[RMDB]
RNA sequence: GGGAACGACUCGAGUAGAGUCGAAAAAUUUGUUAUACUGUUAAAGUCUGGAACAGUGGAGCUUGGCUCUUGAUCCAGCUGUAUAUAAUUGGCUGUUGACUUAUGAAGGAGGACAGGAGUAUGCUAGAGAUAGGGAUAAAAUAUUAUAAUCACAUUACCUCGUAUUAAAUUUCGAUUUAAUACGAGGAAAAGAAACAACAACAACAAC
Reactivity to 2A3 in 0.01 (KOAc 150mM, MgCl2 10mM, bicine 150mM(pH8.5), 24C), signal-to-noise 3, nucleotides 027 to 156: a030u060u050u050g020u070u020a050u040a070c010u050g040u110u100a270a160a080g020u040c010u040g030g000a070a040c030a110g080u070g050g020a020g020c080u090u130g100g030c010u020c050u090u040g060a080u030c020c010a000g000c010u010g010u000a040u010a020u010a090a240u060u050g000g010c000u000g000u060u050g010a070c030u070u030a030u230g050a030a040g000g030a000g010g010a010c000a010g000g040a040g000u070a020u080g060c030u020a000g000a010g030a080u090a070g030g000g050a010u250a110a070a230a040u220a070u260u180a040u160a150a070u170c130a000c000a070u150u260a030
Reactivity to DMS in 0.01 (KOAc 150mM, MgCl2 10mM, bicine 150mM(pH8.5), 24C), signal-to-noise 2, nucleotides 027 to 156: a110u010u010u000g000u000u000a070u000a040c010u070g020u000u020a070a070a090g000u000c040u000g060g020a080a050c030a160g040u000g030g020a030g030c050u000u000g090g000c000u000c040u000u000g000a130u000c000c010a040g020c030u000g040u010a030u000a050u000a090a140u000u000g010g060c060u020g030u010u000g000a140c060u000u000a060u000g000a080a110g000g010a120g040g010a080c050a100g050g000a150g010u000a050u000g010c030u000a080g000a100g000a090u000a080g020g020g030a070u000a030a060a080a110u000a080u000u000a110u010a080a100u010c060a050c000a100u000u000a140
The record gives the reactivity of an RNA of 207 nucleotides to 2A3 and DMS. The reactions ran in a buffer of 150 mM KOAc, 10 mM MgCl2 and 150 mM bicine (pH 8.5), at 24 C. The DMS profile rests on 3,029 reads. DMS adducts were read by reverse transcription with MarathonRT.